[RMDB]
RNA sequence: GGGAACGACUCGAGUAGAGUCGAAAAGCUUUUAAAGAAUUGCAUCAUUUGCUGUGAUUGGUAGACUUGGCAAGGGUGGGAAUAAUUUGGAAGAAGUGUGAGAAUUCUGGUUUUACAUGAGAGUUUUAGGGAGUAAGGCUCCAUCUUUGAGGCAUUACCACUAAAUUAGCUUCGGCUAAUUUAGUGGAAAAGAAACAACAACAACAAC
Reactivity to 2A3 in 0.01 (KOAc 150mM, MgCl2 10mM, bicine 150mM(pH8.5), 24C), signal-to-noise 2, nucleotides 027 to 156: g020c020u090u100u110u240a090a130a040g050a080a100u180u170g020c020a040u030c020a080u070u060u170g010c020u040g030u060g040a060u030u090g020g000u050a020g010a100c040u040u040g020g030c050a040a040g030g020g020u110g050g000g010a010a000u130a080a040u050u100u120g060g000a040a020g040a060a030g060u050g020u020g030a040g040a030a020u090u000c040u050g010g030u020u050u030u080a020c030a020u090g010a060g000a030g090u010u030u100u200a030g000g010g000a060g030u040a020a050g040g010c010u010c000c010a030u010c050u020u030u070g030a010g000g000c010a020u030u130a050
Reactivity to DMS in 0.01 (KOAc 150mM, MgCl2 10mM, bicine 150mM(pH8.5), 24C), signal-to-noise 1, nucleotides 027 to 156: g010c030u000u010u020u000a140a130a220g000a110a110u010u000g030c020a120u020c060a150u000u010u020g020c040u010g040u000g010a140u000u030g020g020u000a060g000a070c030u000u000g020g010c030a050a090g000g010g000u010g000g010g050a070a090u000a040a080u000u000u000g040g000a080a100g010a050a100g010u000g040u010g000a110g000a040a060u010u000c040u020g030g010u000u010u000u010a110c050a100u030g030a120g000a060g030u000u000u000u000a080g030g030g000a070g010u010a050a130g020g000c020u010c010c030a030u000c060u000u010u010g000a030g030g010c000a070u010u010a190